[RMDB]
Conditions: 150 mM KOAc, 10 mM MgCl2 and 150 mM bicine (pH 8.5), 24 C.
Chemical mapping of a 177-nucleotide RNA with 2A3 and DMS.
For DMS, 5,846 sequencing reads were counted.
DMS (dimethyl sulfate) methylates the pairing face of unpaired adenines and cytosines.
2A3 adducts were read by reverse transcription with SuperScript II with manganese.
The data come from the RNA Mapping Database (RMDB), library TTRDES.
DMS adducts were read by reverse transcription with MarathonRT.
RNA sequence: GGGAACGACUCGAGUAGAGUCGAAAAGAUAUGGAUCGACACGGGAGAAGCUGUUCGGAAACGAACAGGCUUCGAAGAACGUGACGAUCCUAAGUCAAAAGCUAGUCACAGUUCGCUGUGACUAGCACCUAGUAGUACCCUUCGGGGUACUACUAGGAAAAGAAACAACAACAACAAC
Reactivity to 2A3 in 0.01 (KOAc 150mM, MgCl2 10mM, bicine 150mM(pH8.5), 24C), signal-to-noise 3, nucleotides 027 to 126: g000a000u020a000u040g000g000a000u000c000g020a010c000a000c010g030g010g020a260g010a030a000g000c020u010g000u000u000c000g020g000a010a000a000c000g010a000a000c010a010g140g040c000u000u020c000g010a030a040g030a010a000c010g000u010g020a010c000g000a010u000c000c000u000a000a000g000u010c020a080a050a040a090g000c000u010a000g000u000c000a000c000a010g010u100u160c250g120c200u000g000u000g000a000c000u000a000g000c000a000
Reactivity to DMS in 0.01 (KOAc 150mM, MgCl2 10mM, bicine 150mM(pH8.5), 24C), signal-to-noise 4, nucleotides 027 to 126: g000a000u000a030u030g010g010a000u000c000g030a220c010a000c010g000g020g000a030g020a020a010g000c000u000g000u000u000c000g020g000a010a000a040c000g010a030a000c010a010g020g010c000u000u000c010g010a080a130g010a230a300c000g010u000g000a140c010g020a010u000c000c000u000a000a070g000u000c000a120a070a140a160g010c000u000a000g000u000c010a000c010a020g000u000u010c250g030c010u000g000u000g020a020c000u000a000g000c010a000